[RMDB]
RNA sequence: GGGAACGACUCGAGUAGAGUCGAAAACCAGGACGUCAAACAAACUAGACCCUGGCUAACCCACCGCGAUGAUGAUCAGUGCGGCCUAGUCCUGAGCGUGAAGCAGGUGUGUGGCUGUCCGUCUAGCAAGACCUACAUCAUUCGUGAUGUAGGUCUUAAAAGAAACAACAACAACAAC
Reactivity to DMS in 0.01 (KOAc 150mM, MgCl2 10mM, bicine 150mM(pH8.5), 24C), signal-to-noise 5, nucleotides 027 to 126: c020c000a040g010g010a120c250g020u000c030a100a080a200c210a070a130a120c190u010a150g000a030c010c000c030u000g000g010c030u010a080a090c000c010c010a120c160c060g010c020g000a080u040g000a040u010g000a090u010c100a090g020u030g020c020g000g020c030c010u000a130g010u020c010c010u000g000a060g030c090g040u030g010a060a150g020c020a040g010g000u000g010u020g020u000g000g020c010u000g010u000c050c030g000u000c010u000a110g000c120
Reactivity to 2A3 in 0.01 (KOAc 150mM, MgCl2 10mM, bicine 150mM(pH8.5), 24C), signal-to-noise 9, nucleotides 027 to 126: c000c010a000g020g030a090c170g020u030c030a050a130a140c050a080a180a070c140u070a070g010a010c000c000c000u010g000g000c000u030a110a110c000c000c010a020c030c060g010c020g050a170u150g000a010u020g010a030u170c110a050g040u080g160c010g000g010c000c000u050a030g020u030c000c000u050g050a070g050c050g080u170g130a100a010g050c010a020g000g000u020g020u040g020u040g040g000c010u010g010u020c020c010g000u000c000u010a000g000c010
The record gives the reactivity of an RNA of 177 nucleotides to DMS and 2A3. For 2A3 the reverse transcriptase was SuperScript II with manganese. The reactions ran in a buffer of 150 mM KOAc, 10 mM MgCl2 and 150 mM bicine (pH 8.5), at 24 C. The data come from the RNA Mapping Database (RMDB), libraries RFM100 and RFMREP. In probing experiments dimethyl sulfate is read out at A N1 and C N3, which are open when not base-paired.